[RMDB]
This 207-nucleotide RNA was probed chemically with DMS and 2A3. Conditions: 150 mM KOAc, 10 mM MgCl2 and 150 mM bicine (pH 8.5), 24 C.

RNA sequence: GGGAACGACUCGAGUAGAGUCGAAAAGACUAGAGAGAUGAACCGCGAAAUAGAAUUCUGGUAUGUAUUAGCAUAGCGUGUCAAUUCGCAGUGACGAUACGAGAAUAAAGAUUGACUAAACAUGUAGCGCCAUCUGUUAGACUGAUUUUGGACGCGGCGCAUACUGUAUGUUCGCAUACAGUAUGCGAAAAGAAACAACAACAACAAC
Reactivity to DMS in 0.01 (KOAc 150mM, MgCl2 10mM, bicine 150mM(pH8.5), 24C), signal-to-noise 2, nucleotides 027 to 156: g030a100c030u000a060g000a080g020a010g020a080u000g010a050a110c090c040g030c070g010a070a070a240u000a070g020a070a110u000u010c060u000g020g010u020a080u000g000u000a040u000u010a060g000c080a040u000a080g020c020g040u000g020u000c090a020a210u000u000c020g000c010a150g020u000g030a060c010g000a040u000a040c030g020a090g010a070a080u000a040a030a120g000a130u010u000g020a220c050u000a080a060a140c050a080u000g020u000a060g000c030g030c000c000a060u000c050u030g000u000u000a070g000a120c050u020g030a140u000u000u000u000g010g020a090c010g010c050g000g010
Reactivity to 2A3 in 0.01 (KOAc 150mM, MgCl2 10mM, bicine 150mM(pH8.5), 24C), signal-to-noise 5, nucleotides 027 to 156: g020a010c060u080a030g020a010g000a040g030a110u070g030a070a010c040c000g020c050g030a040a050a050u130a050g070a060a030u100u030c060u080g030g010u040a060u090g040u030a080u090u100a080g040c030a030u050a030g030c020g000u020g070u070c040a040a080u110u060c020g000c020a010g020u010g060a040c040g000a010u010a050c060g020a020g040a090a020u130a070a080a020g100a080u060u090g020a030c040u080a020a100a020c040a060u130g050u100a020g030c000g000c040c010a030u020c020u030g050u040u040a060g020a060c050u050g060a080u030u070u060u120g040g000a010c020g000c020g000g000